This 177-nucleotide RNA was probed chemically with 2A3 and DMS. For DMS, 3,139 sequencing reads were counted. Reactivities are given for positions 27 through 126. Conditions: 150 mM KOAc, 10 mM MgCl2 and 150 mM bicine (pH 8.5), 24 C. For 2A3 the reverse transcriptase was SuperScript II with manganese. It was measured as part of the RMDB library OK1LIB.
[RMDB]
RNA sequence: GGGAACGACUCGAGUAGAGUCGAAAACUUUUGAAAAUGCAGGGGCAGUGGCUUCCGGUGUGGAAAGAGCAUUGAAAGCUCAAGGAAAGGAAGAUGUAAAUGUUAAAACUUUCGGUGGUGACGGAGGCCAUGCGAUGCGAUUCGUCGCAUCGCAUGGAAAAGAAACAACAACAACAAC
Reactivity to 2A3 in 0.01 (KOAc 150mM, MgCl2 10mM, bicine 150mM(pH8.5), 24C), signal-to-noise 2, nucleotides 027 to 126: c030u200u140u150u300g030a010a000a060a070u090g020c050a040g000g020g170g010c000a030g070u050g040g000c030u080u010c130c000g000g000u010g010u030g060g000a120a160a160g000a020g040c010a000u170u200g070a000a030a040g000c000u000c000a080a080g250g020a110a040a000g050g070a020a030g080a050u010g040u220a050a120a090u140g050u130u170a120a050a020a000c000u000u120u070c070g090g000u150g040g000u060g040a030c040g050g000a000g080g040
Reactivity to DMS in 0.01 (KOAc 150mM, MgCl2 10mM, bicine 150mM(pH8.5), 24C), signal-to-noise 2, nucleotides 027 to 126: c060u000u000u000u010g020a050a080a070a030u000g010c040a070g000g000g010g010c080a090g020u000g020g020c010u010u000c030c010g000g040u010g000u000g030g030a050a070a080g030a060g000c000a040u040u040g010a050a060a210g000c050u010c000a130a110g000g010a040a060a130g000g000a070a100g010a060u030g000u020a040a030a110u030g010u020u010a090a050a110a110c010u000u020u010c010g010g010u030g020g000u010g000a060c050g010g000a040g000g020